[RMDB]
RNA sequence: GGGAACGACUCGAGUAGAGUCGAAAAUUUUAUCAUGAGAUGGCAGCAAUUCAGUUACAUCUUGAGGCUCCACUUCUAUUUUUCUUGCUACUACCAACACACCUGCAGUUACUUCCUCCACUGAAGUCCUGAAUUUCUCAAAGUCACCCGUGAGAGAAAUGCCACUAUUAUUCGUAAUAGUGGCAUUAAAAGAAACAACAACAACAAC
Reactivity to 2A3 in 0.01 (KOAc 150mM, MgCl2 10mM, bicine 150mM(pH8.5), 24C), signal-to-noise 2, nucleotides 027 to 156: u080u050u030u060a130u110c040a030u040g020a010g060a060u030g040g020c070a010g000c020a070a070u060u060c020a050g050u070u140a100c060a080u060c000u020u080g050a050g030g000c010u000c020c020a030c010u040u020c030u090a250u060u090u010u030u020c100u020u100g010c000u020a060c000u010a050c030c000a090a040c040a000c030a020c070c040u020g000c030a050g010u040u050a020c010u050u040c010c020u010c000c030a070c020u030g040a030a000g050u040c020c000u040g040a080a120u060u060u010c030u000c000a040a100a030g050u080c030a050c060c030c030g130u040g010a050g100a000g020a030
Reactivity to DMS in 0.01 (KOAc 150mM, MgCl2 10mM, bicine 150mM(pH8.5), 24C), signal-to-noise 2, nucleotides 027 to 156: u000u010u000u020a090u000c060a070u000g000a060g000a060u030g000g000c050a100g050c030a040a090u000u000c100a130g010u000u000a080c030a050u010c020u000u010g010a140g010g000c020u000c010c010a050c030u010u000c040u000a090u000u000u000u020u000c030u000u010g000c040u000a100c040u010a110c040c020a060a070c050a100c060a040c060c000u010g010c050a100g010u000u010a100c050u010u000c010c020u000c020c040a060c070u000g000a040a080g000u000c030c020u010g000a090a130u010u000u010c030u010c050a050a080a150g010u000c050a080c030c060c030g020u000g020a120g010a090g010a080